Chemical mapping of a 177-nucleotide RNA with DMS and 2A3. Source: RMDB library OK2TST, as collected in RNAgym. Reactivities are given for positions 27 through 126. For DMS the reverse transcriptase was MarathonRT. 2A3 is a SHAPE reagent: it acylates the 2'-hydroxyl of flexible nucleotides of all four kinds.
RNA sequence: GGGAACGACUCGAGUAGAGUCGAAAAAAUGAUGAAGAAUCAUAAAGACUUCUCCUUUACAUUUUUCAAUAAAGGCCAGAAGACAGCGAAGGAUAGGGAGAUAUUUGUCGGUGAAUUUGAGGCCAAAUCAUUAUUAUGGGUUCGCCCAUAAUAAUGAAAAAGAAACAACAACAACAAC
Reactivity to DMS in 0.01 (KOAc 150mM, MgCl2 10mM, bicine 150mM(pH8.5), 24C), signal-to-noise 5, nucleotides 027 to 126: a050a000u000g000a050u000g000a110a080g000a140a020u000c030a050u010a120a100a130g010a130c160u010u000c020u010c030c040u010u010u000a110c100a050u000u010u000u000u020c070a080a140u000a060a060a080g010g010c070c110a300g000a020a040g000a150c070a040g000c050g010a050a060g010g000a030u000a030g000g010g010a080g000a070u010a030u000u000u020g020u000c040g000g010u000g010a040a080u000u000u000g000a140g010g000c010c040a070a060a100
Reactivity to 2A3 in 0.01 (KOAc 150mM, MgCl2 10mM, bicine 150mM(pH8.5), 24C), signal-to-noise 2, nucleotides 027 to 126: a000a000u070g020a010u050g010a070a060g060a120a050u010c020a010u100a060a150a030g040a030c030u040u000c010u080c000c040u060u090u130a080c030a120u150u150u020u040u160c050a070a010u080a200a080a000g000g010c020c010a020g000a040a010g040a050c010a010g120c040g030a030a010g050g020a000u080a040g080g080g020a110g040a050u040a040u020u030u040g020u010c030g030g050u040g040a040a060u050u040u060g050a050g010g030c000c020a010a020a050